The data come from the RNA Mapping Database (RMDB), library TTRDEL.
Structure probing data (2A3 and DMS) for a 177-nucleotide construct.

[RMDB]
RNA sequence: GGGAACGACUCGAGUAGAGUCGAAAAGAUAUGGACCACAGCGACGAAGUACCGUAACAUCAGGAUCGGAAACGAUCCUGUGGGUACAGAGCUGUGUCCUAAGUCAAAAGUAGCCUUCGGGCUACAACACACUACAUAUCUUCGGAUAUGUAGUGUGAAAAGAAACAACAACAACAAC
Reactivity to 2A3 in 0.01 (KOAc 150mM, MgCl2 10mM, bicine 150mM(pH8.5), 24C), signal-to-noise 8, nucleotides 027 to 126: g050a030u070a040u160g000g010a020c060c080a010c120a020g030c010g300a300c050g070a300a040g020u000a010c010c030g090u190a120a130c050a180u260c020a020g000g000a010u000c000g010g030a090a060a040c000g000a000u000c000c000u000g000u000g010g000g000u010a010c010a020g020a010g000c000u000g000u000g000u000c000c000u030a160a030g050u030c020a000a000a010a230g010u000a000g000c010c000u030u080c300g090g000g000c000u000a000c000a010a000
Reactivity to DMS in 0.01 (KOAc 150mM, MgCl2 10mM, bicine 150mM(pH8.5), 24C), signal-to-noise 9, nucleotides 027 to 126: g010a040u000a300u000g010g000a020c170c080a010c010a010g010c000g010a150c210g000a100a100g000u000a010c000c010g010u000a070a170c160a030u000c010a000g000g000a010u000c000g010g000a070a070a170c010g010a000u000c000c000u000g010u000g000g000g010u010a010c010a030g000a150g010c000u000g010u000g010u000c000c000u010a040a130g000u000c030a070a090a090a120g010u000a010g000c000c000u000u010c190g020g010g010c000u000a000c000a060a150
The DMS profile rests on 23,006 reads. The reactions ran in a buffer of 150 mM KOAc, 10 mM MgCl2 and 150 mM bicine (pH 8.5), at 24 C.